RNA sequence: GGGAACGACUCGAGUAGAGUCGAAAAGGGGUCCACUCGAUAAGGGAUCCCAGAGCUUGGAUUUAUAGGCUGAAGCCUCCACGGCCUAUUGUCAGCUCUGGCGAUCCCUUUUGACGAGUGGACGGAGGCACCCAAAACCUUUGAUUCGUCAAAGGAAGUUCUUAUGUUUCUUCGGAAACAUAAGAACAAAAGAAACAACAACAACAAC
Reactivity to DMS in 0.01 (KOAc 150mM, MgCl2 10mM, bicine 150mM(pH8.5), 24C), signal-to-noise 1, nucleotides 027 to 156: g000g000g010g000u030c000c030a030c030u000c010g010a180u000a050a030g050g000g000a030u000c020c000c010a030g010a030g010c000u000u000g060g010a080u000u000u000a020u000a010g010g000c010u010g010a080a170g050c040c000u030c020c020a300c000g020g000c000c000u000a000u000u000g020u010c000a070g000c010u000c010u000g000g010c130g000a010u000c010c000c010u000u010u000u000g020a170c040g000a030g040u000g010g000a010c030g010g010a030g010g050c030a060c000c000c030a110a110a050a200c000c020u000u000u000g020a090u000u010c240g000u010c000a010a020a010g000g020a070a150
Reactivity to 2A3 in 0.01 (KOAc 150mM, MgCl2 10mM, bicine 150mM(pH8.5), 24C), signal-to-noise 1, nucleotides 027 to 156: g050g000g030g020u000c010c000a000c010u000c010g020a050u020a160a040g000g000g000a010u000c000c000c000a010g000a010g000c140u240u250g130g010a100u210u300u080a020u100a000g000g000c000u010g060a190a030g080c020c050u010c020c040a050c010g000g000c000c010u020a030u030u020g020u020c030a000g030c000u010c000u000g000g030c070g000a000u000c030c040c000u000u000u020u020g010a010c000g000a000g000u000g000g000a000c000g000g010a000g000g020c030a070c010c000c040a030a130a040a040c000c000u030u030u010g010a030u000u100c180g060u010c080a000a000a000g000g000a020a020

Source information
This 207-nucleotide RNA was probed chemically with DMS and 2A3. Reactivities are given for positions 27 through 156. Conditions: 150 mM KOAc, 10 mM MgCl2 and 150 mM bicine (pH 8.5), 24 C. The 2A3 profile rests on 1,189 reads.